[RMDB]
Description:
Chemical mapping of a 177-nucleotide RNA with 2A3 and DMS. Reactivities are given for positions 27 through 126. DMS adducts were read by reverse transcription with MarathonRT. The RNA was probed in 150 mM KOAc, 10 mM MgCl2 and 150 mM bicine (pH 8.5) at 24 C. For 2A3, 1,722 sequencing reads were counted. As a SHAPE reagent, 2A3 marks flexible, mostly unpaired nucleotides at the ribose 2'-OH.
RNA sequence: GGGAACGACUCGAGUAGAGUCGAAAAUUGGUCAGGAGGGCGCUCAGGGCGGCGACGUUGGUCGGGCCGUCGUUGGUCAGGGCGUUGGCUCGAUGGCGGGCGAGGACGGGCGAGGGGCUCAACGGCGUACUCGUCCCCGGUUCGCCGGGGACGAGUAAAAAGAAACAACAACAACAAC
Reactivity to 2A3 in 0.01 (KOAc 150mM, MgCl2 10mM, bicine 150mM(pH8.5), 24C), signal-to-noise 2, nucleotides 027 to 126: u110u070g110g000u070c010a010g020g070a020g020g010g000c030g020c040u010c030a030g070g020g000c050g020g000c010g000a000c000g000u040u100g060g020u070c030g000g000g050c000c000g010u030c000g000u000u030g090g220u090c130a080g040g000g000c050g020u020u070g010g000c020u030c030g040a040u040g050g020c030g010g020g010c040g000a030g030g010a040c030g010g030g000c000g010a060g010g030g040g030c000u000c070a000a040c060g020g010c020g000
Reactivity to DMS in 0.01 (KOAc 150mM, MgCl2 10mM, bicine 150mM(pH8.5), 24C), signal-to-noise 2, nucleotides 027 to 126: u030u050g020g000u010c060a050g030g020a160g000g000g010c070g000c030u030c050a080g000g000g050c040g000g000c000g010a030c030g010u030u050g000g020u000c010g000g040g000c100c000g000u010c040g020u000u010g000g000u010c060a090g020g020g020c000g010u000u000g010g050c040u020c050g000a060u020g000g000c040g000g000g020c060g010a110g030g020a120c100g000g000g020c060g000a060g020g000g000g020c070u010c120a060a070c140g020g000c070g020